[RMDB]
RNA sequence: GGGAACGACUCGAGUAGAGUCGAAAAGAUAUGGAUUGUCAUGAACUACGAGACUCGGAAACGAGAGAACUCGCAUGCAAUCCUAAGUCAAAAGUAUCCCGAGAGUCUUCGGACUCUCGGGAUACAACAUCUCUACCAACUUCGGUUGGUAGAGAUGAAAAGAAACAACAACAACAAC
Reactivity to DMS in 0.01 (KOAc 150mM, MgCl2 10mM, bicine 150mM(pH8.5), 24C), signal-to-noise 1, nucleotides 027 to 126: g000a010u010a300u040g020g010a000u000u010g000u010c020a020u010g010a050a100c190u040a290c020g000a030g020a160c000u000c000g010g000a130a160a140c010g000a000g010a080g000a110a090c000u000c020g020c000a000u010g010c000a020a040u000c000c000u010a000a110g010u000c020a120a040a150a170g000u000a000u000c000c010c000g000a020g010a050g000u000c010u000u010c220g040g000a050c000u000c000u010c000g000g010g020a000u000a000c000a030a140
Reactivity to 2A3 in 0.01 (KOAc 150mM, MgCl2 10mM, bicine 150mM(pH8.5), 24C), signal-to-noise 2, nucleotides 027 to 126: g020a020u040a060u230g010g010a030u040u050g110u300c030a020u040g060a140a230c140u240a080c300g090a050g120a200c010u010c000g030g050a090a080a070c020g000a000g000a000g030a100a070c000u000c010g020c000a000u000g000c020a030a000u000c020c010u010a100a020g070u020c040a000a000a040a230g020u000a010u010c030c000c000g020a010g000a000g000u160c160u300u300c300g020g000a000c000u000c000u050c000g000g000g000a000u000a000c010a000a000

Description
This 177-nucleotide RNA was probed chemically with DMS and 2A3. 2A3 adducts were read by reverse transcription with SuperScript II with manganese. Conditions: 150 mM KOAc, 10 mM MgCl2 and 150 mM bicine (pH 8.5), 24 C. It was measured as part of the RMDB library TTRDEL. For DMS the reverse transcriptase was MarathonRT. In probing experiments dimethyl sulfate is read out at A N1 and C N3, which are open when not base-paired.